[RMDB]
RNA sequence: GGGAACGACUCGAGUAGAGUCGAAAAUCAGGAGACUGGGAACACAACGCAGACGCCAUCAUCCUCCAGGAUGUCCACAUUGACACAGGUCCGAGGCUCUGUCAGAUGGGUGAGUCUCCCAAGAGGACCACCACCGAUUUUUCGAAAUCGGUGGUGGAAAAGAAACAACAACAACAAC
Reactivity to 2A3 in 0.01 (KOAc 150mM, MgCl2 10mM, bicine 150mM(pH8.5), 24C), signal-to-noise 3, nucleotides 027 to 126: u110c020a010g020g010a000g010a010c010u040g110g080g160a210a000c060a020c030a120a000c100g030c010a010g010a040c110g020c040c000a120u020c000a010u020c000c050u070c050c000a120g050g040a150u040g030u060c110c010a130c030a150u050u270g010a020c040a000c000a040g100g000u020c030c070g030a080g020g000c000u010c000u040g020u060c020a030g060a160u170g000g050g000u140g040a010g010u000c010u000c030c000c000a060a040g040a040g000g060a000
Reactivity to DMS in 0.01 (KOAc 150mM, MgCl2 10mM, bicine 150mM(pH8.5), 24C), signal-to-noise 2, nucleotides 027 to 126: u000c100a130g000g000a010g000a030c000u020g020g000g000a110a130c010a110c010a080a090c160g060c040a010g000a080c110g090c030c000a250u040c040a110u000c020c000u000c190c020a040g000g010a100u000g000u020c120c150a250c230a080u000u000g000a100c060a120c150a110g050g010u010c130c040g000a090g020g020c030u000c000u060g000u000c090a070g000a150u010g030g000g020u060g010a000g000u000c030u000c000c000c010a180a070g000a060g000g010a160
The record gives the reactivity of an RNA of 177 nucleotides to 2A3 and DMS.
The DMS profile rests on 1,433 reads.
The data come from the RNA Mapping Database (RMDB), library OK1LIB.
Reactivities are given for positions 27 through 126.